Description:
Structure probing data (DMS) for a 177-nucleotide construct. Reactivities are given for positions 27 through 126.

RNA sequence: GGGAACGACUCGAGUAGAGUCGAAAAAAAAAGAUAUGGAAUGGGCGCAUUUGACCUAAUCGUUGAAACAAAUUCGGAAACGAAUUUGUGGAGAUUAGUGUCAUUCAACCCAUUCCUAAGUCAAAAAGAUUAAAUAUUGCUUCGGCAAUAUUUAAUCAAAAGAAACAACAACAACAAC
Reactivity to DMS in 0.01 (KOAc 150mM, MgCl2 10mM, bicine 150mM(pH8.5), 24C), signal-to-noise 1, nucleotides 027 to 126: a100a100a150a120a120g000a000u010a010u040g010g000a020a010u010g000g000g020c020g010c190a090u000u010u000g010a010c010c000u000a000a000u000c000g010u000u000g000a180a120a000c000a000a010a010u020u000c000g020g000a010a020a010c010g010a010a000u000u000u000g000u010g000g020a020g000a020u000u000a010g030u020g010u000c000a000u000u000c300a130a020c000c010c000a010u000u010c010c010u000a010a040g000u010c010a020a050a110a070a160
DMS adducts were read by reverse transcription with MarathonRT. The reactions ran in a buffer of 150 mM KOAc, 10 mM MgCl2 and 150 mM bicine (pH 8.5), at 24 C.